Chemical mapping of a 177-nucleotide RNA with 2A3. Conditions: 150 mM KOAc, 10 mM MgCl2 and 150 mM bicine (pH 8.5), 24 C.
[RMDB]
RNA sequence: GGGAACGACUCGAGUAGAGUCGAAAAGAAUAUAAGAGCGCAGUAAGUGUGAGAGCAAACUGCGCCCGGACUGUAGGAUCCGGUGGCACAGCAACGCUCAAUCACAACACGCUGUGCCACUUGAAGAGCGGAUGCCAUAGUUCGCUAUGGCAUCCGCAAAAGAAACAACAACAACAAC
Reactivity to 2A3 in 0.01 (KOAc 150mM, MgCl2 10mM, bicine 150mM(pH8.5), 24C), signal-to-noise 1, nucleotides 027 to 126: g000a030a000u140a060u100a200a060g040a000g090c000g050c000a000g000u030a140a140g040u120g050u060g130a210g010a100g050c000a150a150a000c000u000g000c000g000c000c000c000g010g000a000c000u020g040u200a030g120g100a130u000c000c000g010g000u000g000g060c000a000c000a030g000c040a280a000c090g060c000u060c000a010a020u200c020a000c000a020a020c080a000c080g000c010u000g000u000g020c030c000a000c000u080u040g020a010a020g080a100